Conditions: 150 mM KOAc, 10 mM MgCl2 and 150 mM bicine (pH 8.5), 24 C. Chemical mapping of a 177-nucleotide RNA with DMS. It was measured as part of the RMDB library OK2TRN. For DMS the reverse transcriptase was MarathonRT.
RNA sequence: GGGAACGACUCGAGUAGAGUCGAAAAUGGAACAUGGCGGUUAUAGCGCACUGUUAUGAGUUCCGUGACCUCAAAGUUGCGGCGUUUAAGGGAGAUGACUCUGUUGUGCUUUGCAGCGAUUACCGGCGGGAGCAGUAGCAUUCGUGCUACUGCUCCCAAAAGAAACAACAACAACAAC
Reactivity to DMS in 0.01 (KOAc 150mM, MgCl2 10mM, bicine 150mM(pH8.5), 24C), signal-to-noise 1, nucleotides 027 to 126: u000g000g000a020a070c030a070u000g000g010c010g010g000u000u000a100u020a080g000c080g020c050a040c050u000g000u000u020a020u000g020a120g010u000u000c000c040g030u010g010a100c030c020u010c200a030a050a200g020u000u010g030c000g010g000c080g030u000u000u010a040a110g010g000g000a100g000a180u020g010a040c010u010c040u010g020u000u020g020u000g000c000u010u060u000g040c030a040g010c010g000a060u010u000a110c020c030g000g040c300